About this RNA
Conditions: 150 mM KOAc, 10 mM MgCl2 and 150 mM bicine (pH 8.5), 24 C. This 207-nucleotide RNA was probed chemically with 2A3. Reactivities are given for positions 27 through 156. 2A3 adducts were read by reverse transcription with SuperScript II with manganese.

RNA sequence: GGGAACGACUCGAGUAGAGUCGAAAAAGCUAAAGCUGUUGCAUAGUCUUUCACCCAACGGUUAUUAUAAGCACCUUGCUUAACAUUUGGAUCUUGACCAACAACGCGACCAACUAAAUUGUGGUCUGGGUUAUUAUAGCGCUCAGAUAAUGACCAGCGUAGGGGUAGCAUUCGUGCUACCCCUACGAAAAGAAACAACAACAACAAC
Reactivity to 2A3 in 0.01 (KOAc 150mM, MgCl2 10mM, bicine 150mM(pH8.5), 24C), signal-to-noise 1, nucleotides 027 to 156: a000g010c030u110a150a020a020g010c090u090g150u270u250g060c070a050u020a060g030u130c000u030u050u020c050a080c040c000c000a010a030c080g000g010u030u070a080u050u070a010u080a190a000g000c090a040c030c120u090u190g000c030u130u070a050a020c020a050u060u050u070g110g000a030u040c030u040u040g040a040c000c000a060a100c030a030a000c150g000c020g090a040c010c000a050a020c030u210a040a120a130u230u190g000u030g030g000u000c000u030g070g000g010u080u050a110u130u020a050u040a030g110c130g030c010u040c020a010g000a180u000a010a030u020g020a020c000c000a000g000